[RMDB]
RNA sequence: GGGAACGACUCGAGUAGAGUCGAAAAAUGAAUUGAUUCGUCAAUUCAUGACCGCAAGCGUGCCGAAAGGCAUUUUAUGCGUACGCUGGCGAAAGCCUAAAAAUCAUCGUGUCUUCGGACACGAUAAAUAUAACCUGGUAUUCGUACCAGGUUAUAUAAAAGAAACAACAACAACAAC
Reactivity to 2A3 in 0.01 (KOAc 150mM, MgCl2 10mM, bicine 150mM(pH8.5), 24C), signal-to-noise 7, nucleotides 027 to 126: a000u000g000a000a000u010u010g010a010u030u060c150g050u010c070a000a000u010u000c000a000u020g050a050c030c020g010c020a020a010g010c010g020u020g000c020c020g100a110a020a020g110g000c010a000u010u010u000u030a060u040g000c010g010u020a020c060g030c100u030g000g000c010g040a090a030a020g040c010c010u080a100a100a020a010a040u170c070a010u000c010g000u000g010u000c010u030u050c230g100g000a000c000a000c000g000a000u020a000a080
Reactivity to DMS in 0.01 (KOAc 150mM, MgCl2 10mM, bicine 150mM(pH8.5), 24C), signal-to-noise 9, nucleotides 027 to 126: a010u000g000a010a000u000u000g010a020u000u010c190g020u000c000a000a000u000u000c000a010u000g010a150c140c010g010c040a050a080g010c230g010u000g010c000c030g010a090a050a120g010g010c090a030u010u000u010u000a070u010g010c090g020u010a040c130g010c080u010g000g010c000g010a100a070a120g000c000c010u000a010a070a070a090a080u000c130a030u000c000g020u000g000u000c000u000u010c200g010g000a010c000a010c000g000a000u000a010a070